[RMDB]
RNA sequence: GGGAACGACUCGAGUAGAGUCGAAAAGCAUUUCCGCAAAAGGCAACUACUAAAAGAUGAUAUGUGUUUGUCGAAAUGCCAGAAUUUAUGUGCUGCAAUGCACUCAGUCGAAUAAGUGGGCCAAAAAGAUAGGCCCUAUGUUCGCAUAGGGCCUAUCAAAAGAAACAACAACAACAAC
Reactivity to DMS in 0.01 (KOAc 150mM, MgCl2 10mM, bicine 150mM(pH8.5), 24C), signal-to-noise 3, nucleotides 027 to 126: g050c060a010u000u010u000c020c090g000c000a020a030a060a030g010g020c010a020a070c010u000a180c040u000a090a060a130a140g020a150u020g000a150u000a040u010g030u010g000u000u000u010g010u000c300g000a070a040a030u010g010c010c030a210g000a130a040u010u030u040a050u020g020u000g000c000u000g000c150a060a020u000g010c040a030c060u020c120a030g000u010c000g000a100a070u020a030a070g020u010g000g000g000c050c150a030a050a030a030a060
Reactivity to 2A3 in 0.01 (KOAc 150mM, MgCl2 10mM, bicine 150mM(pH8.5), 24C), signal-to-noise 4, nucleotides 027 to 126: g020c010a060u040u030u000c010c020g010c060a030a040a000a000g090g000c020a020a040c060u110a040c030u150a070a120a100a140g200a170u100g020a060u070a070u180g050u000g020u030u010u000g040u020c020g030a020a010a010u100g000c000c030a070g070a090a020u140u130u080a150u270g030u030g020c000u000g020c040a050a060u160g000c000a010c000u050c030a040g070u010c020g060a100a050u120a220a010g040u070g010g010g020c000c000a040a120a000a020a000